[RMDB]
RNA sequence: GGGAACGACUCGAGUAGAGUCGAAAAGAUAUGGAGAGGGGCUCGCCGACGAAGAAAUUCGGAAACGAAUUUCAGAGGAACUACGAGUGCACUCUCCUAAGUCAAAAGACAGUCUUCGGACUGUCAAGUUAAUUUACCCCUUCGGGGGUAAAUUAACAAAAGAAACAACAACAACAAC
Reactivity to DMS in 0.01 (KOAc 150mM, MgCl2 10mM, bicine 150mM(pH8.5), 24C), signal-to-noise 1, nucleotides 027 to 126: g000a000u040a300u000g000g000a030g060a010g020g000g010g010c010u000c000g000c060c130g040a170c020g000a300a150g000a000a010a010u000u000c000g000g000a130a120a110c020g000a000a020u000u000u000c000a080g000a300g000g000a060a050c140u010a140c000g010a010g000u000g010c010a180c000u000c020u010c000c000u000a030a050g000u000c070a060a090a140a110g010a000c000a000g000u000c000u000u040c120g020g000a040c010u000g000u000c000a020a060
Chemical mapping of a 177-nucleotide RNA with DMS. The reactions ran in a buffer of 150 mM KOAc, 10 mM MgCl2 and 150 mM bicine (pH 8.5), at 24 C. The DMS profile rests on 579 reads.